[RMDB]
Chemical mapping of a 177-nucleotide RNA with 2A3 and DMS. The RNA was probed in 150 mM KOAc, 10 mM MgCl2 and 150 mM bicine (pH 8.5) at 24 C. The DMS profile rests on 3,408 reads. It was measured as part of the RMDB library OK2TST.
RNA sequence: GGGAACGACUCGAGUAGAGUCGAAAACGUGUCUUGGAGCCCUUAUAAUCCAAGUUUGGAUAAUACUUGUUAAGGCUAUAACCAGUAUAUCAGGAUUGAGGAAAGGAUUCUUUACUCGGUUAGAAGCAUACGUGGAAACAUUCGUGUUUCCACGUAUAAAAGAAACAACAACAACAAC
Reactivity to 2A3 in 0.01 (KOAc 150mM, MgCl2 10mM, bicine 150mM(pH8.5), 24C), signal-to-noise 3, nucleotides 027 to 126: c000g040u060g030u070c030u040u050g050g030a030g030c030c000c000u060u110a250u070a100a040u000c010c000a050a020g000u060u120u110g050g000a050u040a160a040u010a160c030u000u060g010u060u070a090a080g120g020c070u060a030u020a140a010c000c000a010g000u020a050u020a020u090c020a030g030g010a000u020u080g030a070g030g090a080a000a010g080g030a070u060u030c000u020u080u030a020c020u000c040g040g010u020u030a050g020a160a000g050c040
Reactivity to DMS in 0.01 (KOAc 150mM, MgCl2 10mM, bicine 150mM(pH8.5), 24C), signal-to-noise 3, nucleotides 027 to 126: c070g010u010g010u000c030u010u010g010g010a080g010c060c030c030u010u010a060u000a080a100u000c020c000a080a080g010u000u010u010g000g010a040u000a070a090u000a040c040u030u000g010u000u000a030a120g030g000c140u020a110u000a020a020c000c020a010g010u000a020u000a070u000c100a070g000g000a040u000u000g010a110g000g000a030a060a080g000g000a140u000u000c000u000u000u000a060c000u000c070g010g010u000u000a080g000a070a100g020c130